RNA sequence: GGGAACGACUCGAGUAGAGUCGAAAAGAUAUGGAGUGUCUCGGUUACAUCGAUCUCGGAAACGAGGGAGUAGACCGAGAGCACUCCUAAGUCAAAACGGCCUCUUAUGUUCGCAUAAGAGGCCGAACAUAAGCCGUAUCUUCGGAUACGGCUUAUGAAAAGAAACAACAACAACAAC
Reactivity to 2A3 in 0.01 (KOAc 150mM, MgCl2 10mM, bicine 150mM(pH8.5), 24C), signal-to-noise 1, nucleotides 027 to 126: g040a020u090a070u080g020g010a000g010u010g030u070c000u000c000g010g040u100u050a100c100a300u190c150g110a150u030c020u000c030g030g030a070a100a090c000g030a000g020g000g020a020g000u030a070g070a050c030c020g000a010g000a000g010c000a000c000u000c000c000u000a010a000g020u020c030a000a000a140a110c010g040g030c020c030u010c000u050u020a000u020g020u090u060c300g050c160a000u040a010a000g000a000g140g040c000c000g010a010a000
Reactivity to DMS in 0.01 (KOAc 150mM, MgCl2 10mM, bicine 150mM(pH8.5), 24C), signal-to-noise 3, nucleotides 027 to 126: g020a030u000a300u000g010g010a020g040u000g020u000c010u000c000g000g000u010u000a080c110a170u010c050g000a280u020c020u000c000g000g000a180a060a160c010g000a010g000g000g000a300g000u000a070g000a030c000c000g000a010g010a080g000c010a000c010u000c000c000u010a010a100g010u000c040a050a050a130a190c050g010g000c020c000u000c000u000u000a000u000g010u000u030c220g010c000a000u010a000a020g000a020g010g030c000c000g010a010a030
Chemical mapping of a 177-nucleotide RNA with 2A3 and DMS. Reactivities are given for positions 27 through 126. The DMS profile rests on 2,187 reads. The 2A3 profile rests on 1,396 reads. The reactions ran in a buffer of 150 mM KOAc, 10 mM MgCl2 and 150 mM bicine (pH 8.5), at 24 C. The data come from the RNA Mapping Database (RMDB), library TTRDEL. For DMS the reverse transcriptase was MarathonRT.